Chemical mapping of a 207-nucleotide RNA with DMS and 2A3. For 2A3, 1,383 sequencing reads were counted. High 2A3 reactivity points to a flexible backbone, as in loops and unpaired stretches. The DMS profile rests on 3,235 reads.

RNA sequence: GGGAACGACUCGAGUAGAGUCGAAAAGCACUAGAGGGCGUAACGGCUGGGUGUAACCCAACUCUAGGUGUGCUGAUUAACGGGCUUGACUCCGUAACAAAUAGGCACUGGUGGUAAAAAGCAUCCCUGACCAUAUACAUCUUCGGAUGUAUAUGAAUACCCAGGUUUAGUUCGCUAAACCUGGGUAAAAAGAAACAACAACAACAAC
Reactivity to DMS in 0.01 (KOAc 150mM, MgCl2 10mM, bicine 150mM(pH8.5), 24C), signal-to-noise 2, nucleotides 027 to 156: g020c000a070c040u000a100g010a060g000g000g000c040g050u000a200a080c170g000g040c010u000g040g000g040u000g010u010a060a300c000c000c000a040a030c020u000c030u000a040g030g020u010g000u000g040c030u000g000a150u000u010a080a020c020g030g000g030c020u000u000g010a110c110u000c000c000g020u000a030a090c100a050a100a070u000a120g000g000c020a030c030u000g030g020u000g020g000u010a070a050a110a100a060g030c030a120u000c020c010c020u020g000a130c120c000a020u000a010u020a010c010a030u000c000u000u000c300g020g000a030u000g000u000a010u000a000u020g020a130a130
Reactivity to 2A3 in 0.01 (KOAc 150mM, MgCl2 10mM, bicine 150mM(pH8.5), 24C), signal-to-noise 2, nucleotides 027 to 156: g000c010a000c020u010a010g000a010g000g000g000c020g030u040a100a040c100g180g010c000u010g010g000g010u020g040u060a030a030c000c000c010a000a010c030u020c000u020a050g060g040u050g020u010g010c020u050g000a100u020u060a080a010c020g010g000g010c090u110u210g020a140c060u020c070c000g000u020a010a010c020a000a060a030u150a100g010g000c010a020c050u050g080g060u090g000g030u090a050a070a040a050a000g050c020a040u010c000c000c000u000g090a020c020c000a000u000a000u010a000c000a000u000c000u040u040c100g140g030a000u000g000u000a000u000a000u000g000a000a010
It was measured as part of the RMDB library M2RFPK.